[RMDB]
RNA sequence: GGGAACGACUCGAGUAGAGUCGAAAAGAAUAUAAAGCGCGAGGGACCAAUUGCGAGCGACCUCGCGCGACCAGCUGCCGACUCACCAAGCGCGCAGCCAGCUGGAGGUUACGCUCGCAAGAGAAGACCGCGUAUUAUAGUUCGCUAUAAUACGCGGAAAAGAAACAACAACAACAAC
Reactivity to 2A3 in 0.01 (KOAc 150mM, MgCl2 10mM, bicine 150mM(pH8.5), 24C), signal-to-noise 4, nucleotides 027 to 126: g010a050a010u280a040u100a170a100a000g010c000g010c000g000a010g000g010g040a050c040c060a090a240u080u040g000c000g000a010g000c000g010a010c000c000u000c000g000c000g000c000g000a010c000c000a010g000c000u010g020c020c060g080a160c020u020c100a100c070c000a140a040g070c050g000c040g000c160a000g000c020c000a010g010c000u050g000g050a040g140g000u160u070a030c010g010c000u000c000g010c000a000a010g020a000g000a120a030g060a020
Reactivity to DMS in 0.01 (KOAc 150mM, MgCl2 10mM, bicine 150mM(pH8.5), 24C), signal-to-noise 1, nucleotides 027 to 126: g010a080a120u010a040u050a030a070a100g030c000g070c000g000a030g000g000g040a090c160c090a060a120u000u020g020c000g000a010g010c000g010a050c010c000u000c000g010c020g030c000g030a040c010c060a050g000c000u010g000c050c010g010a120c020u000c040a170c100c130a060a060g020c040g030c060g010c050a010g060c080c020a020g000c020u020g040g000a070g020g000u040u030a080c040g000c000u000c000g000c000a020a060g000a150g000a120a090g010a210

Background
An RNA of 177 nucleotides, treated with 2A3 and DMS and read out base by base. It was measured as part of the RMDB library OK1LIB. The reactions ran in a buffer of 150 mM KOAc, 10 mM MgCl2 and 150 mM bicine (pH 8.5), at 24 C. The DMS profile rests on 2,065 reads.